An RNA of 177 nucleotides, treated with DMS and 2A3 and read out base by base. For 2A3 the reverse transcriptase was SuperScript II with manganese.

RNA sequence: GGGAACGACUCGAGUAGAGUCGAAAACACGGAAUAGGAGUAAGACCAUAGCGAUGGGAAGAGAUGCUAGGAGUCGGUGGAGACCGAAGCGAGGAGGAAAGUAAAGAAAGCAACGGGGCUAGCCGUCGUUGGAUAACACGUUCGCGUGUUAUCCAACAAAAGAAACAACAACAACAAC
Reactivity to DMS in 0.01 (KOAc 150mM, MgCl2 10mM, bicine 150mM(pH8.5), 24C), signal-to-noise 1, nucleotides 027 to 126: c130a080c120g000g050a140a070u020a040g000g000a100g010u000a070a070g010a090c050c060a130u010a110g020c060g010a080u000g000g000g000a040a070g020a080g000a050u010g030c040u010a080g040g010a070g060u000c050g000g010u000g030g000a130g000a000c020c050g040a080a040g020c120g010a030g020g000a060g010g010a070a060a070g020u020a070a080a080g000a050a060a070g000c030a080a030c100g010g000g010g000c120u010a090g010c040c060g000u000c070
Reactivity to 2A3 in 0.01 (KOAc 150mM, MgCl2 10mM, bicine 150mM(pH8.5), 24C), signal-to-noise 1, nucleotides 027 to 126: c040a000c020g040g060a100a120u090a120g070g010a080g060u070a120a000g050a060c010c050a090u060a020g100c080g000a080u120g010g000g000a010a060g050a030g020a030u040g030c010u030a050g030g040a020g040u010c050g040g010u050g010g040a070g050a040c000c040g050a020a020g030c060g010a010g030g000a030g040g010a040a000a010g070u140a040a060a050g070a020a070a000g000c020a030a020c020g000g000g000g000c030u020a050g010c010c000g040u050c040